[RMDB]
RNA sequence: GGGAACGACUCGAGUAGAGUCGAAAAAAAGAUAUGGAUCAAUGAACUACUUGAUGAAGGAGCAAUGAUGUAGCGUCGGAAACGACGCUAUUGAGCUCCCUGCAUCAAGCAUUGAUCCUAAGUCAAACUUUGAUUAAUCGUUCGCGAUUAAUCAAAGAAAAGAAACAACAACAACAAC
Reactivity to 2A3 in 0.01 (KOAc 150mM, MgCl2 10mM, bicine 150mM(pH8.5), 24C), signal-to-noise 3, nucleotides 027 to 126: a060a000a000g080a030u110a060u190g000g000a000u000c000a020a010u030g000a090a100c080u200a030c020u300u010g000a000u010g000a030a010g000g010a000g000c030a170a300u100g020a010u080g050u020a000g000c000g030u000c010g040g000a040a060a030c020g020a000c030g040c000u000a010u000u000g000a000g010c010u020c050c020c010u120g070c000a000u010c000a010a000g000c000a000u000u000g010a000u000c000c000u010a070a010g010u000c030a100a030a120
Reactivity to DMS in 0.01 (KOAc 150mM, MgCl2 10mM, bicine 150mM(pH8.5), 24C), signal-to-noise 2, nucleotides 027 to 126: a050a040a060g000a030u000a300u020g000g010a030u000c000a020a000u000g000a060a070c080u020a300c020u000u000g020a000u000g000a200a050g010g000a020g030c030a300a120u000g010a080u000g000u000a000g040c010g030u010c000g010g000a050a040a120c010g020a040c010g020c000u010a000u000u000g000a080g010c000u000c000c000c030u000g010c000a010u000c000a010a010g000c000a010u000u000g010a020u000c000c000u010a000a060g000u010c020a150a090a180